[RMDB]
Chemical mapping of a 207-nucleotide RNA with 2A3 and DMS.
For DMS the reverse transcriptase was MarathonRT.
The RNA was probed in 150 mM KOAc, 10 mM MgCl2 and 150 mM bicine (pH 8.5) at 24 C.
The data come from the RNA Mapping Database (RMDB), library ARCHII.
For DMS, 1,280 sequencing reads were counted.
The 2A3 profile rests on 1,613 reads.
RNA sequence: GGGAACGACUCGAGUAGAGUCGAAAAAACUCAACAGAUAGGGAUAAUCGGCAGCCAAGCGCUAAGGACUAGCAAUAGUCUAUGCGUGCAGUUCACAGACUAAAUGGCAGUGGGUUCGGCUCAGAGAGUCCGAGCUUAAGAUAUAGUCGGUCCCUACGUCACUAGGAGAGUUCGCUCUCCUAGUGACAAAAGAAACAACAACAACAAC
Reactivity to 2A3 in 0.01 (KOAc 150mM, MgCl2 10mM, bicine 150mM(pH8.5), 24C), signal-to-noise 3, nucleotides 027 to 156: a000a020c090u090c030a040a040c020a060g190a170u040a010g000g000g000a000u100a180a080u240c020g010g000c010a010g010c010c000a080a000g020c000g000c000u020a020a090g020g000a000c010u010a000g020c020a050a150u010a010g000u000c010u030a020u090g010c000g020u040g010c010a030g010u090u150c080a090c000a100g200a040c010u060a080a060a140u060g010g040c000a010g040u050g020g010g000u020u000c010g020g010c020u020c090a050g120a010g000a000g300u020c020c010g000a010g000c000u000u030a100a030g060a060u130a010u080a150g000u000c010g000g010u000c010c000c000u030a020c090
Reactivity to DMS in 0.01 (KOAc 150mM, MgCl2 10mM, bicine 150mM(pH8.5), 24C), signal-to-noise 1, nucleotides 027 to 156: a020a050c030u000c030a070a030c200a150g030a230u000a030g000g000g030a060u000a020a060u000c020g000g020c030a090g070c000c040a020a250g030c030g000c060u000a140a080g010g000a030c000u070a000g010c300a050a300u000a000g000u000c000u000a300u010g010c040g000u020g000c100a030g010u020u020c120a160c140a110g000a070c050u010a090a150a140u010g000g000c030a170g000u080g000g000g000u000u000c040g010g190c040u000c020a270g000a180g010a040g000u010c000c000g010a040g000c000u000u000a030a080g000a080u000a200u010a080g030u000c000g000g000u000c000c000c000u040a010c050
Reactivities are given for positions 27 through 156.